[RMDB]
RNA sequence: GGGAACGACUCGAGUAGAGUCGAAAAGAUAUGGAGACCUGAGGGAGCUCAGUCGGAAACGACGAGCGAGGAUCUCAAGGUCUCCUAAGUCAAAACUGUUAACAUUGCUUCGGCAAUGUUAACAGAAUCAACGUUAAGAGUUCGCUCUUAACGUUGAAAAAGAAACAACAACAACAAC
Reactivity to DMS in 0.01 (KOAc 150mM, MgCl2 10mM, bicine 150mM(pH8.5), 24C), signal-to-noise 4, nucleotides 027 to 126: g010a040u010a300u000g000g000a010g000a010c000c000u000g000a010g010g010g000a020g020c000u000c000a110g030u000c000g020g000a080a110a200c010g010a010c010g000a000g010c010g000a050g010g000a030u000c000u000c010a030a090g020g000u000c000u000c000c000u000a000a070g010u010c040a090a070a100a160c000u010g000u000u000a010a010c000a010u000u000g000c000u000u000c230g010g010c010a000a000u000g000u000u000a000a000c000a000g000a060a090
Reactivity to 2A3 in 0.01 (KOAc 150mM, MgCl2 10mM, bicine 150mM(pH8.5), 24C), signal-to-noise 3, nucleotides 027 to 126: g020a030u070a030u150g000g010a000g000a000c000c000u000g000a020g020g010g000a010g020c020u030c120a160g030u010c000g010g010a070a090a040c010g000a000c010g000a000g020c010g030a160g000g000a000u000c000u000c070a080a120g010g000u000c000u000c000c010u010a010a000g030u010c010a010a020a110a180c010u000g000u010u000a000a000c000a000u010u000g000c010u050u080c270g120g000c010a000a000u000g000u000u000a000a000c000a000g000a000a020
Record summary: Source: RMDB library TTRDEL, as collected in RNAgym. An RNA of 177 nucleotides, treated with DMS and 2A3 and read out base by base. Values cover nucleotides 27 to 126. The RNA was probed in 150 mM KOAc, 10 mM MgCl2 and 150 mM bicine (pH 8.5) at 24 C.